Background:
Chemical mapping of a 177-nucleotide RNA with 2A3 and DMS. The data come from the RNA Mapping Database (RMDB), library OK1LIB. For 2A3 the reverse transcriptase was SuperScript II with manganese.

RNA sequence: GGGAACGACUCGAGUAGAGUCGAAAAGAGAAGAGGCAGUUGUUAAAGGAGAUGAUUCCUCAAACAAUCUAUCCGUGUCGGAGGCUCUUGAGGAAUGGGGUGGUAAGACGAUAUUUACACGUGUCGACGAUGAGUGGCAGUUCGCUGCCACUCAUCGAAAAGAAACAACAACAACAAC
Reactivity to 2A3 in 0.01 (KOAc 150mM, MgCl2 10mM, bicine 150mM(pH8.5), 24C), signal-to-noise 1, nucleotides 027 to 126: g070a010g010a080a000g030a090g060g000c070a020g060u080u050g040u070u170a060a090a030g050g040a050g020a110u230g010a030u020u020c000c000u020c000a060a070a050c060a000a080u000c010u120a110u000c000c010g010u030g230u190c070g030g000a050g060g000c000u010c000u100u050g050a020g000g060a080a000u040g000g000g000g030u000g000g120u050a060a080g000a010c000g000a030u010a160u030u120u090a150c090a070c010g050u070g110u080c080g050a020
Reactivity to DMS in 0.01 (KOAc 150mM, MgCl2 10mM, bicine 150mM(pH8.5), 24C), signal-to-noise 1, nucleotides 027 to 126: g000a060g030a110a090g030a030g010g000c090a160g030u050u030g030u000u000a000a110a180g000g040a040g010a060u060g010a040u000u000c040c030u030c110a070a040a020c200a080a090u010c080u000a140u060c010c040g000u020g010u090c100g000g000a060g000g000c060u000c160u000u040g030a030g000g000a010a030u000g000g000g000g020u000g020g000u040a060a100g000a130c070g000a060u010a040u000u010u030a160c080a010c180g000u020g040u000c000g040a200